[RMDB]
RNA sequence: GGGAACGACUCGAGUAGAGUCGAAAAGAAACCGUCGUUUCCGACGUAAGGAAGCAAAAAGAAAGAAAGGUACGAAACCCGGUACCGAAACGGGAGAAAAGAAGUCGAUCCAGACGAAGGAAAGAAAGGGAUAAUCAUAGUUCGCUAUGAUUAUCCCAAAAGAAACAACAACAACAAC
Reactivity to DMS in 0.01 (KOAc 150mM, MgCl2 10mM, bicine 150mM(pH8.5), 24C), signal-to-noise 4, nucleotides 027 to 126: g000a080a090a090c050c040g010u010c070g000u010u000u000c000c000g010a170c140g000u010a080a060g000g010a040a100g020c080a070a080a080a060a070g030a100a060a070g000a100a090a150g000g000u000a020c020g010a060a070a130c020c020c010g000g010u000a030c010c000g000a020a090a090c110g000g000g010a070g000a080a070a070a070g020a080a060g000u000c010g000a140u020c030c050a050g020a050c080g010a060a090g000g000a060a060a090g000a040a090a080
Reactivity to 2A3 in 0.01 (KOAc 150mM, MgCl2 10mM, bicine 150mM(pH8.5), 24C), signal-to-noise 3, nucleotides 027 to 126: g040a050a050a020c010c000g110u090c020g000u000u050u040c040c040g030a050c040g070u120a050a000g030g020a010a050g050c070a010a080a010a000a050g090a050a080a000g090a080a110a050g000g010u030a020c020g020a050a020a040c000c030c000g010g020u000a040c000c000g020a020a030a000c030g000g000g000a060g080a070a050a010a030g070a050a000g050u010c010g000a020u020c030c000a010g010a030c040g010a030a040g070g050a030a050a070g110a010a060a050
An RNA of 177 nucleotides, treated with DMS and 2A3 and read out base by base. It was measured as part of the RMDB library OK1LIB. DMS (dimethyl sulfate) methylates the pairing face of unpaired adenines and cytosines. 2A3 adducts were read by reverse transcription with SuperScript II with manganese.